[RMDB]
RNA sequence: GGGAACGACUCGAGUAGAGUCGAAAAGCACCGUCGAAUACCUGGUCGGUCAGGACGGCUUGAUCUCGUUCUUGGAGGUCAACACGCGCCUUCAGGUAGAACACCCGGUCACCGAGGAAACCGCGGGUGCGCGGGUAAAUUUCGAUUUACCCGCGCAAAAAGAAACAACAACAACAAC
Reactivity to DMS in 0.01 (KOAc 150mM, MgCl2 10mM, bicine 150mM(pH8.5), 24C), signal-to-noise 2, nucleotides 027 to 126: g000c140a130c030c030g010u010c030g000a170a110u010a030c050c000u010g000g030u000c150g000g020u000c080a100g020g010a040c020g010g010c100u010u000g000a050u000c030u020c020g000u000u010c180u000u010g000g000a000g010g000u000c020a050a100c160a090c120g000c130g010c010c000u000u000c020a020g000g000u010a030g000a100a080c120a150c060c040c040g000g020u000c060a110c030c000g000a120g000g000a060a120a130c100c030g000c110g000g010g050
Reactivity to 2A3 in 0.01 (KOAc 150mM, MgCl2 10mM, bicine 150mM(pH8.5), 24C), signal-to-noise 1, nucleotides 027 to 126: g040c020a020c080c000g140u130c040g090a110a090u020a060c000c000u030g000g170u150c080g000g000u020c050a110g000g050a140c020g000g030c080u060u060g030a040u000c020u010c060g170u260u060c090u100u200g160g010a010g000g040u010c010a020a060c050a050c110g110c010g000c000c000u030u050c000a020g010g010u060a040g020a040a010c040a060c040c000c050g020g000u050c030a060c150c040g040a020g040g000a050a180a000c000c000g030c080g100g000g000